Record summary: This 177-nucleotide RNA was probed chemically with DMS. It was measured as part of the RMDB library M2PK50. DMS adducts were read by reverse transcription with MarathonRT.

[RMDB]
RNA sequence: GGGAACGACUCGAGUAGAGUCGAAAAGUGUUAGCGUUCGCGCUAACACAAAGAACGCUGGAACGCGCAGCGCGCUCGCGAGAGCACGAAAGAGCGUUAUAAAAAGCUCGGGCUUCGGCCCGAGCAAGUACAGGGGAUAGUUCGCUAUCCCCUGUACAAAAGAAACAACAACAACAAC
Reactivity to DMS in 0.01 (KOAc 150mM, MgCl2 10mM, bicine 150mM(pH8.5), 24C), signal-to-noise 1, nucleotides 027 to 126: g010u000g000u000u000a000g010c020g050u020u000c250g030c030g000c020u000a010a000c000a000c000a030a050a050g010a160a140c070g020c020u010g010g000a030a030c040g000c000g010c000a030g000c000g010c070g000c020u000c010g010c230g000a230g000a000g000c010a080c060g000a020a080a090g050a080g010c010g020u010u010a160u010a080a040a110a160a080g000c000u000c010g050g010g010c000u000u030c250g020g000c000c000c000g040a000g010c010a000a020